Source information
An RNA of 177 nucleotides, treated with 2A3 and DMS and read out base by base. 2A3 adducts were read by reverse transcription with SuperScript II with manganese. The RNA was probed in 150 mM KOAc, 10 mM MgCl2 and 150 mM bicine (pH 8.5) at 24 C.
[RMDB]
RNA sequence: GGGAACGACUCGAGUAGAGUCGAAAACACUCACGAUUCGUCGUGAGUGAAAGAACGCCAAAGUGACGCAAUCUUCCGCGUCAGCAAGGCGAAACGAGGUAAAAACCGGGUCCUUCGGGACCCGGAAGUUACUUGUCUGGUUCGCCAGACAAGUAACAAAAGAAACAACAACAACAAC
Reactivity to 2A3 in 0.01 (KOAc 150mM, MgCl2 10mM, bicine 150mM(pH8.5), 24C), signal-to-noise 2, nucleotides 027 to 126: c000a000c000u040c000a000c010g010a010u040u060c130g040u000c000g000u130g010a000g010u000g000a000a000a020g020a130a010c020g020c000c020a080a050a030g170u030g000a000c020g000c010a020a160u130c190u270u130c130c090g000c000g000u010c000a000g080c010a010a070g000g000c020g010a060a080a000c080g030a060g040g120u170a120a090a030a020a030c000c020g020g000g000u000c020c000u020u060c180g110g000g000a000c000c010c000g000g000a000a000
Reactivity to DMS in 0.01 (KOAc 150mM, MgCl2 10mM, bicine 150mM(pH8.5), 24C), signal-to-noise 3, nucleotides 027 to 126: c000a020c020u000c000a020c000g000a010u000u020c180g010u000c000g020u000g000a030g020u000g010a030a050a090g000a130a210c040g010c020c000a070a300a230g000u000g000a020c010g000c000a130a130u010c210u000u040c190c140g000c000g000u010c000a030g010c050a050a300g000g000c010g000a020a090a070c100g020a130g000g010u020a040a050a030a080a070c000c000g020g010g000u000c000c020u010u020c140g010g020g000a000c000c000c000g000g000a010a020